[RMDB]
RNA sequence: GGGAACGACUCGAGUAGAGUCGAAAAUGAAAGGUUUAGGGGUAAAUUUAAAGAUAAUGUACAAAAGGAGUUAGACGAAUUUAAUUUAUUAGCAGUAAAGAGCGCGACGCAGUUAAAGGCGCAAUUAGGGGAUUUGUCUUUAGAUCCCGAACAAGCGAGAUGACUAAUAUUUCGAUAUUAGUCAUCUAAAAGAAACAACAACAACAAC
Reactivity to DMS in 0.01 (KOAc 150mM, MgCl2 10mM, bicine 150mM(pH8.5), 24C), signal-to-noise 2, nucleotides 027 to 156: u040g000a110a070a090g010g010u000u000u000a080g030g000g000g010u000a040a090a090u010u010u000a040a060a150g010a090u000a040a100u010g030u010a080c060a060a040a080a130g040g010a090g010u000u000a050g030a070c040g030a090a110u000u000u000a030a090u000u010u000a090u010u010a120g020c020a120g000u000a030a060a150g010a120g010c020g000c030g070a090c080g030c050a060g020u000u000a030a110a110g010g000c000g010c020a020a090u000u010a090g030g020g020g010a160u010u000u010g000u000c060u000u010u000a050g010a070u000c000c000c000g000a040a090c080a040a120g010c070g030
Reactivity to 2A3 in 0.01 (KOAc 150mM, MgCl2 10mM, bicine 150mM(pH8.5), 24C), signal-to-noise 1, nucleotides 027 to 156: u080g010a020a030a000g090g000u090u080u100a040g010g000g000g000u070a090a090a080u140u080u070a030a050a020g000a030u070a090a030u140g000u030a020c080a060a070a050a050g020g000a030g000u070u110a030g020a050c020g020a050a030u040u070u070a090a080u070u110u170a130u030u110a070g020c010a000g000u060a020a100a060g020a000g000c000g000c050g000a070c060g000c050a010g020u000u070a170a110a000g000g010c000g000c030a030a020u070u040a060g000g010g000g000a000u040u000u060g020u050c000u020u020u000a040g020a050u030c000c030c000g090a040a000c080a070a070g070c040g050